The data come from the RNA Mapping Database (RMDB), library ARCHII. An RNA of 207 nucleotides, treated with DMS and 2A3 and read out base by base. For 2A3 the reverse transcriptase was SuperScript II with manganese. For 2A3, 5,364 sequencing reads were counted. For DMS the reverse transcriptase was MarathonRT. Reactivities are given for positions 27 through 156. The RNA was probed in 150 mM KOAc, 10 mM MgCl2 and 150 mM bicine (pH 8.5) at 24 C.

RNA sequence: GGGAACGACUCGAGUAGAGUCGAAAAGUAAAACAGCAACAAAAAUAACUGUAAACAACGCAGAUUACGCUCCAGCUUACGCUAAAGCUGCGUGAGUUAAUCUCCUUUUGGAGCUGGACUGAUUAGAAUUUCUAGCGUUUUAAUCGCUCCAUAACCUGUAUUAUUUUCUGUUCGCAGAAAAUAAUACAAAAGAAACAACAACAACAAC
Reactivity to DMS in 0.01 (KOAc 150mM, MgCl2 10mM, bicine 150mM(pH8.5), 24C), signal-to-noise 1, nucleotides 027 to 156: g050u010a060a140a080a160c030a040g000c000a080a300c050a070a080a100a110a260u000a030a060c000u000g020u000a120a070a180c050a030a020c060g000c020a060g010a090u000u000a020c120g010c000u020c050c020a090g000c030u010u000a030c070g000c090u010a080a060a130g020c150u010g000c030g000u000g000a020g000u010u010a000a040u000c000u010c090c100u000u020u000u000g010g030a040g000c020u000g030g020a070c050u000g000a080u020u000a040g020a050a040u000u000u010c080u000a100g000c070g030u000u000u000u000a010a020u010c010g030c160u000c000c040a090u000a070a140c090c040u000
Reactivity to 2A3 in 0.01 (KOAc 150mM, MgCl2 10mM, bicine 150mM(pH8.5), 24C), signal-to-noise 6, nucleotides 027 to 156: g030u030a020a080a050a060c020a020g070c030a010a070c050a100a170a100a080a080u170a100a070c030u040g030u120a140a070a080c050a050a030c080g000c030a010g020a080u050u090a040c070g010c000u010c010c000a000g000c010u010u010a000c010g000c020u100a220a090a150g100c130u050g000c040g010u010g000a000g000u000u060a050a050u040c040u070c030c020u070u130u060u110g000g000a010g000c010u010g020g000a010c020u020g010a040u040u040a020g030a050a050u060u100u150c100u140a080g050c020g050u000u000u010u050a030a040u030c010g020c030u000c010c000a040u050a110a070c000c020u010